[RMDB]
RNA sequence: GGGAACGACUCGAGUAGAGUCGAAAAGAGCGUCCAUCCGUCCGUAUUAACGCCUCGGUCUCAGGAACUAUAAAAGCUGGACAGUUGAGAUUGAGAAUGCAGCUUCCAGAGCCAUAGCCACAGCGCACCUACUACUGGUCUUCGGACCAGUAGUAGGAAAAGAAACAACAACAACAAC
Reactivity to DMS in 0.01 (KOAc 150mM, MgCl2 10mM, bicine 150mM(pH8.5), 24C), signal-to-noise 3, nucleotides 027 to 126: g010a130g000c020g020u030c000c050a090u000c000c020g000u000c000c020g000u030a090u030u040a100a100c130g000c090c000u010c040g050g010u000c010u040c030a050g010g040a050a080c080u030a090u010a090a050a090a030g000c040u000g000g000a060c110a050g000u000u000g000a060g000a080u020u000g020a060g020a130a090u050g000c010a060g000c020u000u000c010c020a080g010a160g020c070c110a060u000a070g020c040c050a080c100a030g020c110g030c090a180
Reactivity to 2A3 in 0.01 (KOAc 150mM, MgCl2 10mM, bicine 150mM(pH8.5), 24C), signal-to-noise 7, nucleotides 027 to 126: g070a020g040c040g020u030c010c000a040u020c020c010g080u040c020c000g030u070a090u110u150a130a040c060g020c010c010u020c020g050g010u010c060u000c040a050g100g040a060a070c040u040a020u080a190a150a030a030g050c040u030g020g030a060c070a040g010u020u070g040a100g030a190u060u150g040a090g090a150a050u130g030c010a010g000c000u010u010c010c010a010g000a020g090c020c000a040u080a050g020c020c000a080c040a090g020c050g000c020a030